RNA sequence: GGGAACGACUCGAGUAGAGUCGAAAACAACGGCAAUAACGUGGACCUGGAGCAGGAGACCAUGGACCUCCUCAACAACGAACUGCUCUACAAUAUGAUGGUGCAGACGGUCUCCCACCAGUUCUCCGGAGGUUUACUGAUUCGUCAGUAAACCUCCAAAAGAAACAACAACAACAAC
Reactivity to 2A3 in 0.01 (KOAc 150mM, MgCl2 10mM, bicine 150mM(pH8.5), 24C), signal-to-noise 2, nucleotides 027 to 126: c030a060a060c000g070g010c080a080a200u100a240a030c080g010u060g050g000a030c010c010u030g000g010a050g100c130a020g070g020a010g010a000c010c020a020u060g020g050a090c010c000u100c010c070u160c060a030a050c010a040a010c010g050a040a030c010u010g020c020u020c030u060a020c090a130a130u190a120u300g210a120u060g000g000u020g040c010a010g060a050c050g030g020u020c000u000c020c000c000a040c010c010a030g000u010u000c050u000c000c000
Reactivity to DMS in 0.01 (KOAc 150mM, MgCl2 10mM, bicine 150mM(pH8.5), 24C), signal-to-noise 2, nucleotides 027 to 126: c070a100a060c050g020g010c050a080a080u000a090a140c060g040u000g020g000a050c170c000u000g010g000a100g040c160a090g040g000a060g030a040c010c000a280u010g030g000a120c040c050u000c010c040u000c060a050a160c110a030a060c070g030a120a160c040u000g000c010u000c010u010a010c100a160a080u000a120u000g000a130u010g000g030u000g000c030a050g020a060c120g010g000u000c030u000c000c010c040a210c050c010a020g020u000u000c010u010c070c300